[RMDB]
RNA sequence: GGGAACGACUCGAGUAGAGUCGAAAAGAUGGGUCCGAUGGAUUAAUGCGUCGCCAGCCAUUGGAUCCUGAUUGAUAGAUUGACGGCGACGGUCGGAUCACUCGGUAAUUCGGUGCUCGACGAGUGAUCCGUGAUGAUAGUUAAGAUGAGCACCUAAAGGUCAUUUAAUCUUCGGAUUAAAUGACCUAAAAGAAACAACAACAACAAC
Reactivity to 2A3 in 0.01 (KOAc 150mM, MgCl2 10mM, bicine 150mM(pH8.5), 24C), signal-to-noise 3, nucleotides 027 to 156: g060a020u210g000g000g000u000c000c010g000a000u000g010g030a030u110u210a270a040u300g090c000g000u000c000g010c000c020a010g010c020c000a000u000u000g000g000a010u000c000c000u000g000a010u030u130g020a040u050a120g260a150u020u150g110a070c120g010g000c000g020a000c000g000g010u060c000g000g010a000u000c000a000c000u000c000g000g120u210a140a130u180u080c060g000g000u010g000c000u010c010g000a000c010g010a000g000u000g000a010u000c000c000g000u000g010a000u060g000a000u070a120g150u300u140a030a020g040a070u100g010a000g000c000a000c000c000u010a030a070
Source: RMDB library OK3TST, as collected in RNAgym. An RNA of 207 nucleotides, treated with 2A3 and read out base by base. For 2A3, 1,469 sequencing reads were counted. The RNA was probed in 150 mM KOAc, 10 mM MgCl2 and 150 mM bicine (pH 8.5) at 24 C.